Chemical mapping of a 177-nucleotide RNA with 2A3 and DMS. For DMS the reverse transcriptase was MarathonRT. For 2A3 the reverse transcriptase was SuperScript II with manganese. For 2A3, 3,740 sequencing reads were counted. Reactivities are given for positions 27 through 126.
[RMDB]
RNA sequence: GGGAACGACUCGAGUAGAGUCGAAAACAACUCACAUUUGUGAAGAAUUUUAUUACUGCCAAUCCGGCAUGGAGUAAGGCAGUCUUUAUUUCGCCUUACAAUUCACAGAAUGCUGUGUCUCGUUCAAACUACAAAAAUUGUUCGCAAUUUUUGUAGUAAAAGAAACAACAACAACAAC
Reactivity to 2A3 in 0.01 (KOAc 150mM, MgCl2 10mM, bicine 150mM(pH8.5), 24C), signal-to-noise 4, nucleotides 027 to 126: c010a010a020c010u020c030a010c000a020u010u060u060g010u010g010a040a060g030a080a050u010u190u130u140a170u160u170a080c030u000g010c010c010a110a180u170c120c130g030g000c060a020u090g020g020a120g010u020a020a000g010g000c020a020g030u030c010u110u210u080a180u040u090u070c040g010c000c000u010u030a030c030a050a080u010u010c010a000c000a010g130a120a020u020g020c070u010g060u020g030u000c020u030c040g030u070u060c040a100a100
Reactivity to DMS in 0.01 (KOAc 150mM, MgCl2 10mM, bicine 150mM(pH8.5), 24C), signal-to-noise 4, nucleotides 027 to 126: c130a090a140c030u010c050a080c030a100u000u000u000g010u000g000a030a030g010a130a080u000u000u010u010a080u010u000a160c050u000g000c000c010a090a170u020c240c130g000g000c040a040u010g000g010a140g000u000a020a020g000g010c010a080g020u010c160u010u010u010a090u020u010u000c120g010c020c010u000u000a040c020a100a130u000u000c010a010c020a030g010a040a040u000g010c170u000g010u000g000u000c040u000c060g010u010u000c100a060a090